[RMDB]
RNA sequence: GGGAACGACUCGAGUAGAGUCGAAAAGUGCGUGACUGGGUGCUCGGCACGAACGGCAAGUGGGUCACGAUGGGCAUCCCGUCGGACGGCUCGUACGGCAUCCCCGAGGACAUCAUCUACGGCGUGAGCCAGCACGUAUGUUCGCAUACGUGCUGGCAAAAGAAACAACAACAACAAC
Reactivity to DMS in 0.01 (KOAc 150mM, MgCl2 10mM, bicine 150mM(pH8.5), 24C), signal-to-noise 3, nucleotides 027 to 126: g030u020g010c020g010u030g000a040c040u010g030g020g010u000g010c040u000c040g030g030c050a120c070g020a070a040c130g020g020c020a100a100g020u000g010g000g010u010c020a060c110g000a040u020g000g020g020c150a120u010c050c010c040g020u000c010g020g000a080c080g010g000c030u000c030g010u010a060c060g010g020c080a090u000c060c020c000c060g010a100g020g000a070c060a050u000c050a070u000c010u000a070c070g010g010c020g030u000g010a170
Reactivity to 2A3 in 0.01 (KOAc 150mM, MgCl2 10mM, bicine 150mM(pH8.5), 24C), signal-to-noise 1, nucleotides 027 to 126: g070u050g000c010g030u040g060a070c060u140g060g060g000u100g020c060u050c070g040g000c000a020c140g050a090a000c040g030g000c060a120a050g080u150g060g070g080u060c020a040c060g000a040u070g000g000g060c100a120u120c010c000c000g000u020c020g010g000a060c010g020g000c000u000c020g030u060a040c000g010g000c020a020u020c040c000c000c000g050a030g020g000a050c020a070u040c010a010u000c040u030a030c060g060g010c050g060u050g030a040
The record gives the reactivity of an RNA of 177 nucleotides to DMS and 2A3. The DMS profile rests on 2,666 reads. Conditions: 150 mM KOAc, 10 mM MgCl2 and 150 mM bicine (pH 8.5), 24 C. DMS adducts were read by reverse transcription with MarathonRT. Values cover nucleotides 27 to 126.